The data come from the RNA Mapping Database (RMDB), library RFM100. This 177-nucleotide RNA was probed chemically with DMS and 2A3. As a SHAPE reagent, 2A3 marks flexible, mostly unpaired nucleotides at the ribose 2'-OH. The 2A3 profile rests on 680 reads. For DMS, 909 sequencing reads were counted. For DMS the reverse transcriptase was MarathonRT. High DMS reactivity at an A or C suggests that its Watson-Crick edge is free. The RNA was probed in 150 mM KOAc, 10 mM MgCl2 and 150 mM bicine (pH 8.5) at 24 C.

[RMDB]
RNA sequence: GGGAACGACUCGAGUAGAGUCGAAAACUCAGCCUCUGAUAAGCUGGACUCGGCACGCCCGCAACAAGCACCGAGGAGUUAAGAGAGCCGCAAGCGCAGGGAAGGCCUCCCCGCACGGGUGGGGGAACUUUCGGACGGGAUUCGUCCCGUCCGAAAGAAAAGAAACAACAACAACAAC
Reactivity to DMS in 0.01 (KOAc 150mM, MgCl2 10mM, bicine 150mM(pH8.5), 24C), signal-to-noise 1, nucleotides 027 to 126: c030u000c000a120g000c070c070u010c140u010g000a060u040a080a150g000c090u000g000g040a080c090u010c000g000g020c010a130c210g000c000c120c020g130c080a160a130c170a050a180g040c120a040c000c000g000a010g000g000a070g020u000u050a160a030g000a210g000a000g050c010c030g000c130a080a020g000c180g040c210a100g000g000g080a030a160g000g000c050c000u000c000c040c000c000g000c100a220c120g000g010g010u030g000g050g000g000g000a020a080
Reactivity to 2A3 in 0.01 (KOAc 150mM, MgCl2 10mM, bicine 150mM(pH8.5), 24C), signal-to-noise 1, nucleotides 027 to 126: c040u050c000a060g000c010c010u010c020u030g050a150u100a160a020g000c000u020g000g000a030c010u010c030g010g000c060a000c060g000c000c010c000g000c000a030a080c000a080a060g070c030a000c030c000g020a080g030g030a040g030u020u070a050a020g050a000g000a040g000c010c000g090c020a000a070g000c000g060c090a000g020g100g000a110a000g000g000c000c000u090c000c050c000c000g150c020a150c160g040g000g010u070g000g040g000g000g000a000a030